The record gives the reactivity of an RNA of 307 nucleotides to DMS. It was measured as part of the RMDB library POS240. The RNA was probed in 150 mM KOAc, 10 mM MgCl2 and 150 mM bicine (pH 8.5) at 24 C.

[RMDB]
RNA sequence: GGGAACGACUCGAGUAGAGUCGAAAAUUUUAGAGGGAAGACCUCUUAUUGGAGCCACACUCCCAUGUAUGAUUGAGCAAUUCAAAGUGUUUUGGCUGAAACCCUACGAACAAUGUCCGCAGUGUUCAAAUGCAAAGCAACCAGGUGGGAAACCAUUCGUGUCAGUGGCAGUCAAGAAACAUAUUGUUAGUGCAUGGCCGAACGCAUCCCGAAUAAGCUGGACUAUCGGGGAUGGAAUCCCAUACAUUGGAUCAAGGACAGAAGAUAGGUGUGAGUUCGCUCACACCAAAAGAAACAACAACAACAAC
Reactivity to DMS in 0.01 (KOAc 150mM, MgCl2 10mM, bicine 150mM(pH8.5), 24C), signal-to-noise 1, nucleotides 027 to 266: u000u000u000u000a050g010a000g020g020g000a190a190g000a300c010c040u000c020u000u000a030u000u010g000g010a040g000c030c080a050c050a060c060u000c010c010c090a180u020g020u020a010u020g000a090u020u010g040a060g030c120a090a090u000u070c070a010a150a080g000u000g010u000u000u010u000g010g000c020u000g000a100a020a170c110c000c000u010a090c060g000a130a140c080a010a090u000g010u000c080c030g000c080a100g030u000g020u000u000c080a040a050a100u030g000c040a050a160a160g000c100a040a100c150c070a020g020g000u020g000g000g000a020a060a300c020c010a140u000u000c040g010u040g030u000c080a090g010u000g010g000c000a010g000u000c070a080a020g040a050a040a060c160a010u070a000u000u000g010u000u000a090g020u040g000c000a060u000g020g000c010c010g000a070a130c200g000c040a170u000c000c020c000g010a030a030u040a110a060g000c050u000g000g040a120c050u000a010u000c030g020g000g020g000a000u000g010g010a030a280u000c060c060c000a000u000a040c070a100u000u030g000g050a070u020c150a020a110g040g000a010c020a060g000a020a050g040a060u000a060